Source information
This 177-nucleotide RNA was probed chemically with DMS and 2A3. The DMS profile rests on 1,771 reads. The RNA was probed in 150 mM KOAc, 10 mM MgCl2 and 150 mM bicine (pH 8.5) at 24 C. For 2A3 the reverse transcriptase was SuperScript II with manganese. DMS adducts were read by reverse transcription with MarathonRT.
RNA sequence: GGGAACGACUCGAGUAGAGUCGAAAAGCUCAUUCAGCAGAGAUAAGGUCGUCCAGUUCAAGUGAUUACUCAAGUUCGAGUGAUGAUGAGGAUGAAACUGGUGGAAGAGGAGCCAAAUCGUACAAGAGGAUUAAAAUGGGUUCGCCCAUUUUAAUCCAAAAGAAACAACAACAACAAC
Reactivity to DMS in 0.01 (KOAc 150mM, MgCl2 10mM, bicine 150mM(pH8.5), 24C), signal-to-noise 3, nucleotides 027 to 126: g040c020u010c020a110u000u000c050a080g020c020a090g000a050g010a070u040a080a150g020g000u000c050g000u000c020c010a140g030u020u010c110a110a200g010u000g000a060u000u010a010c000u000c020a100a220g010u010u000c180g030a030g020u010g010a020u000g000a050u000g010a180g000g020a050u010g010a050a100a050c040u000g000g020u010g030g000a030a090g010a070g020g000a090g000c030c060a020a100a050u020c150g020u000a060c150a140a100g030a200
Reactivity to 2A3 in 0.01 (KOAc 150mM, MgCl2 10mM, bicine 150mM(pH8.5), 24C), signal-to-noise 2, nucleotides 027 to 126: g050c020u010c040a040u110u060c020a030g030c000a000g100a020g050a060u110a180a050g110g010u050c020g020u040c010c000a040g040u000u100c070a080a050g010u030g110a030u010u020a020c010u000c010a090a110g270u180u240c060g030a000g000u040g000a000u020g000a010u080g010a030g060g020a040u040g000a050a040a020c040u030g000g040u010g100g000a070a020g050a020g010g010a000g000c000c000a040a030a020u060c080g090u080a070c020a040a080g100a060